[RMDB]
RNA sequence: GGGAACGACUCGAGUAGAGUCGAAAAGAUAUGGAUUAGGUAAUUACAGCGUUAUCUAAGACAGGUUCAUCGGAAACGAUGAACUCGAGAUAACGAACUACUGUACCACCUAAUCCUAAGUCAAAGAACGGAUUAACUUUCGAGUUAAUCCGUUCAACGAACAUCUGUUGUUCGCAACAGAUGUUCGAAAAGAAACAACAACAACAAC
Reactivity to 2A3 in 0.01 (KOAc 150mM, MgCl2 10mM, bicine 150mM(pH8.5), 24C), signal-to-noise 2, nucleotides 027 to 156: g000a010u000a000u040g000g000a000u000u000a000g020g000u040a120a150u300u050a070c000a000g030c030g010u000u000a000u000c000u110a140a020g000a000c000a010g010g020u010u000c000a000u000c000g000g000a000a000a000c000g000a000u000g000a000a000c000u000c000g000a000g000a010u010a010a000c010g000a020a000c040u270a040c000u180g000u020a010c020c020a000c010c000u000a000a000u010c000c000u000a010a000g000u000c020a150a060a070g000a000a000c000g000g000a000u000u000a000a000c010u020u100u260c300g060a010g010u000u000a000a000u000c010c000g000u000u000c000a000a000
This 207-nucleotide RNA was probed chemically with 2A3. It was measured as part of the RMDB library RNAMAK. For 2A3, 2,234 sequencing reads were counted.